[RMDB]
Chemical mapping of a 177-nucleotide RNA with 2A3 and DMS. Values cover nucleotides 27 to 126. DMS adducts were read by reverse transcription with MarathonRT. The reactions ran in a buffer of 150 mM KOAc, 10 mM MgCl2 and 150 mM bicine (pH 8.5), at 24 C.

RNA sequence: GGGAACGACUCGAGUAGAGUCGAAAAGAUCGCUACAACGCGCUAAGCAAUGGAGAUGAUUCUUGAGGGAAGCAAUUCUGCAGAGACAUCUCCACCCUGGGGUGGCGUCGCCAGAAUACACCGACCCUUCGUAUUGCUUGUUCGCAAGCAAUACGAAAAAAGAAACAACAACAACAAC
Reactivity to 2A3 in 0.01 (KOAc 150mM, MgCl2 10mM, bicine 150mM(pH8.5), 24C), signal-to-noise 6, nucleotides 027 to 126: g050a080u110c030g010c020u070a050c040a150a030c070g000c010g000c080u090a040a030g040c030a050a170u070g000g000a000g000a000u020g020a050u120u030c010u020u050g030a140g030g020g020a030a010g070c070a040a190u050u000c010u040g030c060a020g010a000g000a010c000a000u000c000u000c000c000a010c010c000c000u030g000g010g010g040u060g040g000c030g020u030c010g020c020c000a000g080a060a040u120a040c030a030c000c060g060a060c000c010c000
Reactivity to DMS in 0.01 (KOAc 150mM, MgCl2 10mM, bicine 150mM(pH8.5), 24C), signal-to-noise 3, nucleotides 027 to 126: g000a070u040c020g020c010u000a040c160a110a080c190g020c010g010c030u040a070a040g000c070a100a180u020g010g000a080g000a000u010g000a120u010u000c000u000u020g010a170g000g000g000a020a060g020c300a040a080u000u000c020u000g030c050a290g000a020g010a010c010a010u000c020u000c010c010a040c030c040c010u010g020g010g030g010u000g000g010c030g000u010c030g020c070c020a050g040a080a110u020a050c080a060c050c010g000a120c010c040c030